[RMDB]
RNA sequence: GGGAACGACUCGAGUAGAGUCGAAAAGAUGCCACCAACAAAACAAAGGAGAUGAUUUCUGGGUGAAAUGAGGCAUAACUAAUGCUUUGAAGUCACCCAAAUCAACAGGCCUUUCCUGCGGAAAAAGAUACCAUCCGCAAUUCGUUGCGGAUGGUAUAAAAGAAACAACAACAACAAC
Reactivity to DMS in 0.01 (KOAc 150mM, MgCl2 10mM, bicine 150mM(pH8.5), 24C), signal-to-noise 2, nucleotides 027 to 126: g000a070u010g020c030c030a200c110c040a090a150c080a060a030a080a090c220a030a070a040g060g000a120g030a120u010g000a000u010u000u020c240u010g000g000g040u000g000a060a060a110u000g010a040g000g000c000a010u000a020a110c250u020a040a170u000g000c000u000u000u000g000a200a100g000u000c010a010c000c010c010a000a000a010u000c000a020a120c250a200g000g000c010c030u000u000u000c040c010u000g000c250g000g000a050a010a050a120a140g010
Reactivity to 2A3 in 0.01 (KOAc 150mM, MgCl2 10mM, bicine 150mM(pH8.5), 24C), signal-to-noise 1, nucleotides 027 to 126: g060a010u050g090c000c020a080c020c010a100a130c050a030a160a030a010c080a060a110a080g050g000a140g000a040u060g020a030u040u070u170c140u120g000g000g000u010g010a020a020a110u170g010a010g010g010c020a010u020a090a000c080u120a180a010u020g040c020u000u000u020g150a150a020g040u000c010a000c000c000c000a000a010a000u010c000a000a030c010a010g100g010c010c000u000u030u030c000c010u110g010c060g010g100a080a090a000a000a020g100

Structure probing data (DMS and 2A3) for a 177-nucleotide construct.
The RNA was probed in 150 mM KOAc, 10 mM MgCl2 and 150 mM bicine (pH 8.5) at 24 C.
The DMS profile rests on 963 reads.